Structure probing data (DMS and 2A3) for a 307-nucleotide construct. DMS adducts were read by reverse transcription with MarathonRT. For DMS, 4,723 sequencing reads were counted.

RNA sequence: GGGAACGACUCGAGUAGAGUCGAAAACACGCGGCUUCGGCCGCGUGAAGGUGAUAUCUUCGGAUAUCACCAAGCAGCGUCUACGGACGCUGCAACUAUUGUCGUGAGACAAUAGAGUCGGACUUCGGUCCGACACUGCAGGUCAACGGAUCAUCUUCAGAUCAGCUAUUGCAGAAGAAAGGUCAGCCAAGCGCUCUGGGCCUGAUCGACUGUAUAUAGGAGCUUCUGAUUUCAACCAGAAGCUAACUCUCUCCGAAACAAUGAGUAAGGCAGAAUUCGUUCUGCCUAAAAGAAACAACAACAACAAC
Reactivity to DMS in 0.01 (KOAc 150mM, MgCl2 10mM, bicine 150mM(pH8.5), 24C), signal-to-noise 1, nucleotides 027 to 266: c020a010c000g030c030g020g000c000u000u020c160g020g000c010c000g070c000g030u000g000a020a060g020g000u000g000a010u000a000u000c030u000u030c150g050g040a000u000a000u000c010a010c040c010a020a050g050c040a010g010c000g030u000c000u010a110c120g030g000a070c000g030c010u000g010c020a050a100c000u010a010u000u000g020u000c010g000u000g000a130g000a020c010a040a030u010a010g000a140g030u000c000g020g000a020c000u000u020c220g060g000u010c000c000g000a000c020a000c130u020g000c070a050g000g000u010c080a070a050c080g000g010a010u000c070a060u030c060u020u010c130a080g000a100u010c100a080g000c020u010a020u010u000g000c000a010g000a070a290g000a030a180a080g030g010u010c000a060g040c000c010a100a240g000c130g010c040u000c190u010g020g010g000c010c010u000g000a070u000c010g000a220c000u000g000u000a020u000a020u000a050g000g010a040g010c020u000u000c000u000g000a060u020u030u010c170a090a250c190c000a020g010a020a000g000c000u020a010a030c090u000c070u000c020u010c080c010g000a120a140a050c130a090a020u010g000a050g000u020a130
Reactivity to 2A3 in 0.01 (KOAc 150mM, MgCl2 10mM, bicine 150mM(pH8.5), 24C), signal-to-noise 3, nucleotides 027 to 266: c010a000c000g000c000g000g030c000u070u100c220g160g000c020c000g020c000g000u000g000a000a020g010g000u000g000a000u000a000u010c020u060u070c180g110g000a000u000a000u000c000a020c010c000a010a040g010c000a000g010c010g000u000c000u050a090c300g160g000a010c000g020c010u000g010c020a000a010c000u000a010u000u000g000u000c020g040u040g100a070g000a000c000a000a000u020a020g080a030g000u010c010g000g000a000c010u050u010c180g100g010u000c000c010g000a000c030a000c020u150g050c030a020g010g100u090c040a090a060c090g130g010a060u060c020a020u030c080u190u130c080a040g030a130u080c040a020g030c010u040a030u120u040g000c010a010g010a070a000g030a070a100a010g040g010u020c010a010g030c030c040a210a030g080c080g030c140u070c090u130g120g040g040c010c010u080g070a180u050c000g010a020c010u020g020u060a050u040a020u040a300g100g090a020g010c020u030u000c020u030g090a150u160u300u300c070a050a030c030c000a000g000a000a000g000c000u010a050a030c000u030c010u030c000u010c030c020g110a130a110a040c070a110a140u300g040a030g140u110a050